This 177-nucleotide RNA was probed chemically with DMS and 2A3. The DMS profile rests on 1,907 reads. Source: RMDB library OK2TRN, as collected in RNAgym. The reactions ran in a buffer of 150 mM KOAc, 10 mM MgCl2 and 150 mM bicine (pH 8.5), at 24 C.
RNA sequence: GGGAACGACUCGAGUAGAGUCGAAAACGGCAAUUGCCGCCAUGAUAUCAGCCUUGCUUGGCGGCGAUAGCCGCCAAAAUACGAGCCCAGGAGCGCUGGCCCUUAUGGAAGGAGUUCAGCUCGUAUACUAAUCGAUGAGUUUCGACUCAUCGAUUAGAAAAGAAACAACAACAACAAC
Reactivity to DMS in 0.01 (KOAc 150mM, MgCl2 10mM, bicine 150mM(pH8.5), 24C), signal-to-noise 2, nucleotides 027 to 126: c030g010g020c000a170a040u000u000g010c000c000g000c000c010a030u010g000a140u000a070u000c140a050g000c100c080u000u000g010c030u000u010g000g040c010g010g000c000g030a010u010a070g030c020c000g060c050c070a030a080a070a060u000a040c010g000a030g000c020c040c040a100g030g010a070g020c050g000c080u000g010g020c080c010c100u000u000a090u020g010g030a110a090g000g000a100g000u010u000c040a090g010c000u010c010g020u000a010u000a200
Reactivity to 2A3 in 0.01 (KOAc 150mM, MgCl2 10mM, bicine 150mM(pH8.5), 24C), signal-to-noise 2, nucleotides 027 to 126: c000g000g000c000a040a050u030u010g000c010c000g020c010c000a020u040g040a060u050a090u190c110a050g100c040c030u160u190g010c020u000u020g020g000c000g000g040c000g000a010u000a030g020c030c040g150c020c040a110a080a000a000u040a030c000g000a000g020c010c010c020a050g160g040a100g020c090g020c090u050g030g080c000c000c020u180u140a210u300g150g120a020a060g040g010a070g040u070u090c010a010g000c000u020c000g000u010a020u000a010